Description
An RNA of 207 nucleotides, treated with DMS and 2A3 and read out base by base. For DMS, 3,815 sequencing reads were counted.
[RMDB]
RNA sequence: GGGAACGACUCGAGUAGAGUCGAAAAUACUUACAAAACUCGCUUUCAGUUAUGUGUAGGCGACAAUAGGGUUUUGGAUAUGGCGAGUACGUAUUUCGACAUCCGGGGAAUACUGGAUAGAGGUCACUCCUUCAAACCGUACAGCGGUACAGCGUACUGUAUGAAAUAGUUUCGACUAUUUCAUACAAAAAGAAACAACAACAACAAC
Reactivity to DMS in 0.01 (KOAc 150mM, MgCl2 10mM, bicine 150mM(pH8.5), 24C), signal-to-noise 2, nucleotides 027 to 156: u000a030c060u010u010a260c050a020a080a110a090c050u000c000g020c080u010u000u020c040a150g000u030u010a040u000g030u000g040u000a100g020g000c000g000a090c100a040a110u010a100g000g020g010u000u020u010u000g000g000a180u000a060u010g040g040c010g030a060g040u000a030c120g020u000a100u000u000u000c050g000a070c070a110u010c040c020g000g000g010g010a140a080u000a060c060u000g030g010a080u020a090g000a070g020g000u000c070a080c060u020c030c010u000u000c090a090a070a080c040c040g000u000a070c030a130g000c060g000g020u000a040c070a050g010c020g030u010a050c080
Reactivity to 2A3 in 0.01 (KOAc 150mM, MgCl2 10mM, bicine 150mM(pH8.5), 24C), signal-to-noise 5, nucleotides 027 to 156: u050a000c050u140u020a050c050a030a090a030a020c000u020c020g020c010u050u080u130c110a110g030u100u190a130u180g110u050g060u080a040g040g050c000g050a050c070a060a110u140a130g070g030g010u050u040u050u090g040g000a030u020a060u190g060g000c020g010a010g030u010a030c040g010u020a050u020u070u020c010g020a020c040a060u020c030c040g000g000g000g070a120a080u070a170c000u010g020g020a020u020a090g050a030g010g040u030c030a030c070u070c010c000u040u130c060a170a090a010c030c000g020u070a060c040a080g040c020g060g040u070a060c040a030g050c030g070u070a070c030
Conditions: 150 mM KOAc, 10 mM MgCl2 and 150 mM bicine (pH 8.5), 24 C.